The data come from the RNA Mapping Database (RMDB), library OK3TST. This 207-nucleotide RNA was probed chemically with 2A3 and DMS. The 2A3 profile rests on 592 reads. The reactions ran in a buffer of 150 mM KOAc, 10 mM MgCl2 and 150 mM bicine (pH 8.5), at 24 C. Values are in units of 0.01, from 0 to 300, in steps of 10. For DMS, 3,051 sequencing reads were counted.
RNA sequence: GGGAACGACUCGAGUAGAGUCGAAAAAGUUCUAGUCCUCACCUAAGAUCAGACUCACAUGGCCCUCAAAGUAAGAGCACUUGGUUGGGCUUUGUGGUGGGGAUAAGUGUCUCAUUUUUAGUCCCAAAUUAAAAACGAGAUUUUGGGCUGUACAUCACUAUUAAUGAGCCUUCGGGCUCAUUAAUAGAAAAGAAACAACAACAACAAC
Reactivity to 2A3 in 0.01 (KOAc 150mM, MgCl2 10mM, bicine 150mM(pH8.5), 24C), signal-to-noise 1, nucleotides 027 to 156: a000g110u100u090c020u010a020g040u000c000c000u000c010a030c000c020u070a140a050g030a120u170c050a090g100a160c100u000c030a030c010a010u000g010g020c000c010c000u050c080a090a060a000g030u030a090a110g150a060g100c000a000c010u000u000g040g030u140u020g010g000g000c000u000u000u010g010u000g000g000u000g000g000g000g000a020u030a140a020g010u010g030u000c030u010c020a090u020u110u020u000u180a000g130u190c000c000c000a000a010a010u040u050a060a060a030a010a000c090g030a100g020a180u030u000u000u060g010g000g000c000u070g030u070a020c060a170u190c050a030
Reactivity to DMS in 0.01 (KOAc 150mM, MgCl2 10mM, bicine 150mM(pH8.5), 24C), signal-to-noise 2, nucleotides 027 to 156: a100g000u000u000c020u010a240g020u000c020c010u010c030a040c020c010u000a060a090g030a120u010c120a190g020a150c090u000c010a140c050a080u020g010g000c020c000c010u000c060a030a030a090g010u020a100a160g030a220g040c130a050c020u000u000g010g040u000u000g040g010g030c000u000u000u000g010u000g010g000u000g030g000g030g000a030u000a020a080g030u000g030u000c010u000c010a100u000u000u010u000u020a010g020u000c040c080c080a060a100a080u000u010a020a010a020a010a040c020g000a090g020a070u010u000u010u000g020g030g050c060u000g010u000a040c070a160u000c060a200